[RMDB]
RNA sequence: GGGAACGACUCGAGUAGAGUCGAAAAGACACGGGUGAAGCGAUAGGGCUACACGCAAGUGACAUGGUGGUCAGGCUGCCGGAUAGCAGAUAGAGCGUGUGAUUCUUUGGAAACAGCAAAGGAUGGUUAGCAUACGCCUAUUCGUAGGCGUAUGCUAAAAAGAAACAACAACAACAAC
Reactivity to 2A3 in 0.01 (KOAc 150mM, MgCl2 10mM, bicine 150mM(pH8.5), 24C), signal-to-noise 2, nucleotides 027 to 126: g070a000c010a020c020g070g000g030u090g080a090a000g030c040g070a040u060a100g000g060g000c000u070a000c000a000c000g020c020a000a010g040u000g060a040c020a050u100g090g060u030g010g030u010c040a030g030g020c000u040g000c020c000g010g100a020u070a110g030c050a000g050a160u210a030g110a000g000c020g030u000g030u040g050a020u010u000c040u020u040u000g010g040a040a140a090c030a050g030c010a000a000a020g090g010a000u120g030g090u030
Reactivity to DMS in 0.01 (KOAc 150mM, MgCl2 10mM, bicine 150mM(pH8.5), 24C), signal-to-noise 1, nucleotides 027 to 126: g000a100c040a040c020g000g000g010u000g000a120a030g040c070g000a100u040a010g030g040g020c010u000a070c100a050c170g000c110a030a070g030u000g010a030c010a130u000g020g040u030g020g000u000c010a000g010g030c050u000g000c000c020g000g020a030u000a080g040c000a000g000a110u030a060g020a090g000c050g000u020g000u040g000a070u020u000c010u000u000u000g030g000a120a130a140c250a030g000c040a090a030a000g030g010a010u010g000g000u000

Source: RMDB library RFM100, as collected in RNAgym.
The record gives the reactivity of an RNA of 177 nucleotides to 2A3 and DMS.
The 2A3 profile rests on 1,127 reads.
The RNA was probed in 150 mM KOAc, 10 mM MgCl2 and 150 mM bicine (pH 8.5) at 24 C.